RNA sequence: GGGAACGACUCGAGUAGAGUCGAAAACUAUUUAUAGACAGAACAGUGGAAAACGUAUAUCGCUAUAAACCUUACACACCGAAUCUUCCAGUCGUACCAUUCCACAUAGGCGAGGCAUAAGCGAAAGCGUACUAUGAGUCUUCGGACUCAUAGUACGAAAAGAAACAACAACAACAAC
Reactivity to 2A3 in 0.01 (KOAc 150mM, MgCl2 10mM, bicine 150mM(pH8.5), 24C), signal-to-noise 9, nucleotides 027 to 126: c010u010a080u040u110u040a140u050a030g080a040c080a030g080a170a010c020a050g040u080g070g080a100a110a040a010c010g040u040a060u030a030u140c030g000c030u010a020u050a110a080a040c010c010u060u110a040c070a000c010a020c040c040g050a050a050u020c020u070u000c020c010a010g010u030c010g010u020a050c020c000a020u060u030c030c010a040c020a060u060a050g050g000c030g020a020g010g020c030a040u060a140a030g020c030g060a090a020a010g060
Reactivity to DMS in 0.01 (KOAc 150mM, MgCl2 10mM, bicine 150mM(pH8.5), 24C), signal-to-noise 7, nucleotides 027 to 126: c050u000a070u020u020u010a060u020a050g010a080c080a140g010a050a050c070a100g020u010g000g010a100a050a090a070c120g000u010a060u040a050u010c040g010c040u000a070u010a030a070a090c070c050u010u010a080c070a050c100a060c060c050g030a060a070u010c050u000u000c040c020a060g010u010c040g000u010a050c040c030a100u020u020c030c010a020c080a060u020a050g000g000c020g010a080g000g020c040a040u020a040a080g010c060g010a060a060a070g010

Source: RMDB library OK1LIB, as collected in RNAgym. This 177-nucleotide RNA was probed chemically with 2A3 and DMS. The reactions ran in a buffer of 150 mM KOAc, 10 mM MgCl2 and 150 mM bicine (pH 8.5), at 24 C.